[RMDB]
RNA sequence: GGGAACGACUCGAGUAGAGUCGAAAAGUAAUAGAUAACUGGAUGCAGCGUAGGGGUCAACGCAUAUCCAGUACGAAUGGUACCUGUAAAUAAAAUAUGGUCCCUAGUACAAGUACCAACAGAAGGAUAAGCGAUGGUGAUGUCAAUCACAUUUGCACCACGUAGCUAAUUUCGAUUAGCUACGUGGAAAAGAAACAACAACAACAAC
Reactivity to DMS in 0.01 (KOAc 150mM, MgCl2 10mM, bicine 150mM(pH8.5), 24C), signal-to-noise 3, nucleotides 027 to 156: g000u000a090a120u000a110g010a170u000a060a070c030u000g000g010a050u000g030c140a160g010c010g020u000a150g010g030g010g020u000c010a090a030c030g020c010a240u020a090u000c010c020a030g020u000a050c120g010a090a170u010g030g030u000a010c010c010u000g010u000a060a120a190u010a080a050a090a150u010a090u010g040g020u000c010c000c010u010a130g000u000a040c010a010a040g000u010a030c030c010a030a200c100a150g000a040a080g010g020a160u000a040a090g020c080g000a070u000g050g030u000g030a050u000g020u030c140a070a090u010c030a060c040a100u000u000u020g030c070a220
Reactivity to 2A3 in 0.01 (KOAc 150mM, MgCl2 10mM, bicine 150mM(pH8.5), 24C), signal-to-noise 4, nucleotides 027 to 156: g020u030a040a150u060a140g100a100u110a180a040c010u000g020g000a010u020g090c160a070g010c220g010u050a060g000g020g010g010u010c010a020a000c010g000c000a000u000a000u130c000c000a000g010u010a000c010g060a060a130u090g000g000u010a000c010c010u020g010u040a030a110a080u150a010a110a090a030u180a080u060g040g000u020c000c000c000u010a030g020u010a010c000a010a020g000u000a010c000c010a000a030c030a030g170a140a020g090g000a060u050a110a040g010c020g030a010u050g040g110u020g020a040u040g090u180c050a090a050u030c010a020c010a060u060u080u170g000c010a010